RNA sequence: GGGAACGACUCGAGUAGAGUCGAAAAUGAUCGAGAGAUCUAACGAUGUACGCGAGUCAAAGGCACAGACUCGAGCGAAAGCUCGGUCGAAAGACCGCGUACAUCGGUCGGCAAGUGUCGAGUCAAAACCAUACGGUCAGUUCGCUGACCGUAUGGUAAAAGAAACAACAACAACAAC
Reactivity to DMS in 0.01 (KOAc 150mM, MgCl2 10mM, bicine 150mM(pH8.5), 24C), signal-to-noise 4, nucleotides 027 to 126: u010g010a010u000c010g000a300g000a260g000a010u000c000u000a130a210c020g010a020u010g000u010a000c000g030c000g010a070g000u000c000a040a090a170g010g040c180a070c190a140g020a010c010u000c020g010a010g020c010g000a130a090a150g000c000u000c000g010g010u000c010g010a100a070a140g000a030c000c000g010c000g020u000a010c010a000u000c010g000g030u000c010g000g000c030a060a130g000u000g010u000c000g000a030g000u000c020a090a060a060
Reactivity to 2A3 in 0.01 (KOAc 150mM, MgCl2 10mM, bicine 150mM(pH8.5), 24C), signal-to-noise 3, nucleotides 027 to 126: u090g000a000u000c010g000a020g010a010g000a110u000c010u010a070a040c010g000a000u000g010u020a000c010g030c010g040a090g030u020c040a110a060a100g220g060c120a050c050a160g000a010c040u070c200g000a000g000c000g040a120a020a000g000c000u000c010g010g000u000c010g010a020a000a010g000a000c000c000g010c010g000u000a000c000a000u000c010g000g020u000c010g000g000c020a170a300g040u040g050u130c000g010a000g020u000c000a000a020a000